Chemical mapping of a 177-nucleotide RNA with 2A3 and DMS. The 2A3 profile rests on 1,400 reads. In probing experiments dimethyl sulfate is read out at A N1 and C N3, which are open when not base-paired. For DMS, 1,091 sequencing reads were counted. It was measured as part of the RMDB library M2PK90.

RNA sequence: GGGAACGACUCGAGUAGAGUCGAAAAGAAAAUAAGUGAUGGAUGGAAGCGUCAAACCAAACAUCGCAAUGACGCUAAAGAAUGGAGAACAGCUAAUAAAUGGAAACAAGUUCUUCUCCAAAAAAAAACAUUGACUUAGGUUCGCCUAAGUCAAUGUAAAAGAAACAACAACAACAAC
Reactivity to 2A3 in 0.01 (KOAc 150mM, MgCl2 10mM, bicine 150mM(pH8.5), 24C), signal-to-noise 2, nucleotides 027 to 126: g030a010a110a020a080u180a050a100g020u010g020a050u020g020g050a010u000g050g020a080a050g090c060g120u090c090a110a000a020c040c030a040a040a020c010a060u050c040g000c020a000a040u080g070a080c020g000c080u090a110a050a000g090a080a110u070g000g010a020g000a000a000c020a000g010c030u040a000a020u140a130a300a030u150g050g050a020a160a000c030a020a090g000u010u010c000u020u000c000u000c000c030a040a010a020a000a000a000a000a000
Reactivity to DMS in 0.01 (KOAc 150mM, MgCl2 10mM, bicine 150mM(pH8.5), 24C), signal-to-noise 1, nucleotides 027 to 126: g000a140a060a110a060u000a090a100g000u010g010a030u000g020g000a270u000g010g020a130a050g030c100g000u030c080a060a060a100c080c010a020a020a090c070a000u020c040g020c080a030a040u020g010a100c170g020c070u020a050a070a060g010a060a090u000g000g000a000g000a020a030c110a040g000c050u000a090a090u000a040a120a080u000g000g000a050a040a150c120a030a040g000u000u000c160u000u000c010u000c000c010a000a000a000a000a020a020a080a100